[RMDB]
RNA sequence: GGGAACGACUCGAGUAGAGUCGAAAAGCGGGGCUUGAAACGCGGGUAGCGCGCACGCCCGGCGAAGAAAUUCGCAUACGCGGUGUGCUGGUGCCGAAGUGUCUGCUGCAACGGCACGCUCGACACCUAGAACAUACCGUAUUCGUACGGUAUGUAACCUAGUAAGGUCGUUCGCGACCUUACUAGGAAAAGAAACAACAACAACAAC
Reactivity to 2A3 in 0.01 (KOAc 150mM, MgCl2 10mM, bicine 150mM(pH8.5), 24C), signal-to-noise 3, nucleotides 027 to 156: g030c020g000g020g010g000c000u060u080g070a090a090a080c080g010c050g020g030g040u100a050g050c060g000c020g000c060a000c000g020c000c020c000g000g000c000g000a000a000g030a020a050a020u010u010c010g010c030a040u090a210c080g010c100g000g010u020g000u010g000c050u060g000g000u020g010c020c010g010a090a040g020u030g000u010c060u120g060c080u060g020c080a120a040c020g030g000c010a010c020g020c080u030c000g010a010c010a030c030c020u010a050g040a070a000c000a010u000a000c000c000g010u010a020u030u040c110g050u020a010c010g010g000u000a000u000g000u010a000a030
Reactivity to DMS in 0.01 (KOAc 150mM, MgCl2 10mM, bicine 150mM(pH8.5), 24C), signal-to-noise 1, nucleotides 027 to 156: g040c040g000g020g030g040c070u020u010g000a150a070a070c020g000c050g010g040g000u000a080g080c000g040c070g040c020a060c040g030c010c000c010g000g020c000g000a000a050g020a100a070a210u000u020c000g040c000a130u010a220c030g010c060g190g020u000g000u010g000c000u030g010g020u000g020c000c030g000a090a090g020u000g010u020c020u070g040c070u000g010c090a210a170c140g000g000c010a050c020g000c030u010c010g000a010c050a050c000c030u000a150g010a200a060c000a020u040a060c000c000g000u010a010u000u000c280g000u000a010c000g010g020u000a020u000g010u000a010a060

Structure probing data (2A3 and DMS) for a 207-nucleotide construct.
For DMS, 2,347 sequencing reads were counted.
The reactions ran in a buffer of 150 mM KOAc, 10 mM MgCl2 and 150 mM bicine (pH 8.5), at 24 C.
2A3 adducts were read by reverse transcription with SuperScript II with manganese.
Values cover nucleotides 27 to 156.